Structure probing data (DMS and 2A3) for a 207-nucleotide construct.
The data come from the RNA Mapping Database (RMDB), library OK3TST.
Values cover nucleotides 27 to 156.
For DMS, 1,817 sequencing reads were counted.
2A3 adducts were read by reverse transcription with SuperScript II with manganese.
Conditions: 150 mM KOAc, 10 mM MgCl2 and 150 mM bicine (pH 8.5), 24 C.
RNA sequence: GGGAACGACUCGAGUAGAGUCGAAAAUGAGUACAGAGAGAAUAAGCAAUUUGCCCAAAAUCACACAGCUAGUAGGUGGUGAAGCCAGGAAUCAAACCCAGACAGUAAAGCUCAUAAUAACUACACUGUUAUUCAAGACAAUAUGUGUUAAAUGCCAUCGUCCUGCUAUAUUCGUAUAGCAGGACGAAAAAGAAACAACAACAACAAC
Reactivity to DMS in 0.01 (KOAc 150mM, MgCl2 10mM, bicine 150mM(pH8.5), 24C), signal-to-noise 1, nucleotides 027 to 156: u000g010a090g030u000a120c060a080g030a090g040a160g000a080a070u000a100a090g020c050a060a120u000u010u000g050c000c020c010a100a070a060a140u000c080a140c050a090c020a120g020c010u000a070g010u000a090g000g020u000g000g030u000g010a100a130g020c050c040a070g010g000a060a080u000c020a080a070a220c050c000c010a160g000a000c020a020g050u000a060a070a100g000c010u000c080a030u000a030a090u000a050a010c010u000a140c060a020c030u010g030u010u000a080u000u010c080a070a170g000a000c040a020a040u000a020u000g040u030g020u000u000a050a050a050u010g070c020c030a180
Reactivity to 2A3 in 0.01 (KOAc 150mM, MgCl2 10mM, bicine 150mM(pH8.5), 24C), signal-to-noise 2, nucleotides 027 to 156: u090g000a020g080u060a050c060a020g070a010g010a000g000a110a200u130a090a040g030c080a010a090u110u110u130g020c000c000c010a040a010a010a050u110c020a020c000a000c030a030g030c070u050a040g070u060a050g100g000u070g010g000u020g020a000a000g000c010c020a030g020g070a010a050u050c060a030a060a000c020c030c030a000g040a030c020a010g030u020a020a050a000g000c020u050c080a000u080a170a020u070a120a000c010u070a020c050a020c130u070g010u030u020a060u050u110c040a090a010g050a000c020a070a050u040a060u210g060u030g010u080u050a070a050a060u200g000c080c000a020